[RMDB]
RNA sequence: GGGAACGACUCGAGUAGAGUCGAAAAAAGUCUCUUUUGAUCCUUCUAUGGUGGAUGAGUACACUGUGUCUACAGCUCCAAAGGCUGUGGAUCCCGUUGGACCUCUUCCUCCUGUGAGCUCCGACGCAUUUCACUGUACUUUCGAGUACAGUGAAAUAAAAGAAACAACAACAACAAC
Reactivity to 2A3 in 0.01 (KOAc 150mM, MgCl2 10mM, bicine 150mM(pH8.5), 24C), signal-to-noise 2, nucleotides 027 to 126: a000a000g140u090c100u020c000u080u070u040u080g070a070u040c000c000u070u060c070u110a080u090g030g000u010g030g000a020u020g010a000g010u020a010c010a000c020u030g020u030g000u050c010u010a000c000a000g000c010u060c050c070a050a050a050g030g000c010u000g010u000g010g000a000u000c000c020c010g050u080u050g030g030a050c010c010u010c000u030u010c000c020u000c000c010u010g010u000g020a020g000c030u030c050c040g100a070c030g040c080
Reactivity to DMS in 0.01 (KOAc 150mM, MgCl2 10mM, bicine 150mM(pH8.5), 24C), signal-to-noise 6, nucleotides 027 to 126: a080a070g000u010c050u000c030u000u000u000u000g010a110u010c030c030u010u000c060u000a080u010g010g020u000g000g000a040u000g000a050g000u000a280c030a030c020u000g010u000g020u000c000u010a010c010a010g010c000u000c040c300a110a120a300g000g000c010u000g010u000g010g010a010u000c130c030c090g010u000u010g000g000a160c290c010u000c000u000u000c020c010u000c020c010u000g010u000g000a060g000c130u010c060c070g010a080c130g020c170